[RMDB]
RNA sequence: GGGAACGACUCGAGUAGAGUCGAAAAUUUCUUUUGAAAGAGGAGACGGGUCUCCGCCCGCCCCCAGCCCCGGGAUAGCCGAAGUGCCGAGGAAGAGCCGGAGGAGGAGAGGCAAGAGAUCCCGAGGAAAGCUCAAACUUCGGUUUGAGCAAAAGAAACAACAACAACAAC
Reactivity to 2A3 in 0.01 (KOAc 150mM, MgCl2 10mM, bicine 150mM(pH8.5), 24C), signal-to-noise 4, nucleotides 027 to 129: u020u020u020c030u000u110u050u120g100a150a100a040g030a020g030g000a020g000a040c010g020g010g030u000c030u010c090c020g010c010c000c000g040c010c000c000c000c010a050g030c010c010c000c010g000g000g000a080u080a060g040c010c000g030a070a020g050u070g040c000c000g030a040g010g060a050a070g000a030g030c020c040g020g010a020g020g020a000g000g010a040g000a010g000g000c040a040a000g020a010g010a050u020c050c010c000g000a040g000g040a060a100a010
Reactivity to DMS in 0.01 (KOAc 150mM, MgCl2 10mM, bicine 150mM(pH8.5), 24C), signal-to-noise 3, nucleotides 027 to 129: u020u000u010c010u020u050u000u060g060a060a100a110g000a110g010g010a000g010a110c000g020g000g040u020c050u060c130c130g020c020c050c050g000c070c010c010c030c040a210g000c070c010c020c130g030g060g020a090u060a070g000c000c030g010a050a080g010u080g020c000c000g030a090g030g010a060a060g010a110g030c080c040g000g000a020g020g030a000g020g020a070g020a010g040g000c130a040a020g020a030g010a100u050c050c060c010g020a120g020g050a000a000a000